Chemical mapping of a 177-nucleotide RNA with 2A3 and DMS. The 2A3 profile rests on 36,389 reads. It was measured as part of the RMDB library OK1LIB. For DMS the reverse transcriptase was MarathonRT. The reactions ran in a buffer of 150 mM KOAc, 10 mM MgCl2 and 150 mM bicine (pH 8.5), at 24 C. 2A3 adducts were read by reverse transcription with SuperScript II with manganese. Reactivities are given for positions 27 through 126. The DMS profile rests on 29,813 reads.
RNA sequence: GGGAACGACUCGAGUAGAGUCGAAAAGGACGCCGUGUUUGGAGAGCGGACGAAAGCUCUUGCUUCCGGCCCGCUGUCAAGCGUACCAGACGAUCGAGUCAGGGUCGACUCGACAGGUCGGCCAUACGCCGGUUUCUAGGUUCGCCUGGGAACCGGCAAAAGAAACAACAACAACAAC
Reactivity to 2A3 in 0.01 (KOAc 150mM, MgCl2 10mM, bicine 150mM(pH8.5), 24C), signal-to-noise 9, nucleotides 027 to 126: g010g000a010c020g010c020c030g140u120g110u140u190u280g080g010a070g010a000g020c000g000g010a010c010g030a030a010a000g000c020u050c090u280u300g030c000u010u000c010c000g020g010c020c000c000g000c000u050g130u140c030a040a020g000c000g000u010a230c010c000a000g000a000c010g020a020u010c000g000a000g000u000c000a000g000g000g000u000c000g000a010c010u030c090g060a060c070a030g000g030u000c000g010g000c000c000a040u070a040c070
Reactivity to DMS in 0.01 (KOAc 150mM, MgCl2 10mM, bicine 150mM(pH8.5), 24C), signal-to-noise 7, nucleotides 027 to 126: g000g000a040c010g020c000c150g020u020g010u010u030u030g010g010a060g000a020g000c000g000g000a100c010g000a040a010a010g000c000u030c230u010u050g010c000u000u000c020c000g000g000c130c000c000g020c000u000g000u010c020a160a130g000c020g010u000a090c010c010a140g000a040c020g010a070u000c010g000a040g000u000c000a130g000g010g020u010c020g000a010c000u010c070g000a100c300a130g000g010u000c000g010g010c000c010a110u030a040c150